RNA sequence: GGGAACGACUCGAGUAGAGUCGAAAAUAGAUUUCUUGUAGCUGCAACACAUUUGCCCACAAGAGGGCAAUGUAAGAGAAGUCAUGGCCAAAUUCUCACUCGAAUUAGGAAUUGCUUAUUAGACCGAAAGAGAUUGUACCUUUCUUAUAUAAAUUGGCUAGAACGCAAGGUUCGCCUUGCGUUCUAGAAAAGAAACAACAACAACAAC
Reactivity to 2A3 in 0.01 (KOAc 150mM, MgCl2 10mM, bicine 150mM(pH8.5), 24C), signal-to-noise 1, nucleotides 027 to 156: u050a000g050a070u000u000u090c000u020u020g090u150a060g070c100u130g060c010a000a150c050a080c050a300u100u080u210g020c000c000c000a110c200a250a120g220a290g120g030g000c030a000a000u000g000u070a080a000g000a000g020a040a000g040u010c000a060u050g040g000c020c000a090a000a000u040u010c050u000c020a040c070u060c020g060a120a200u110u080a130g000g070a030a020u080u080g000c010u000u000a010u050u110a150g020a040c000c000g050a000a070a000g020a000g030a070u000u050g020u020a000c000c000u000u120u030c040u080u190a150u010a000u080a080a180a300u050u020g090g000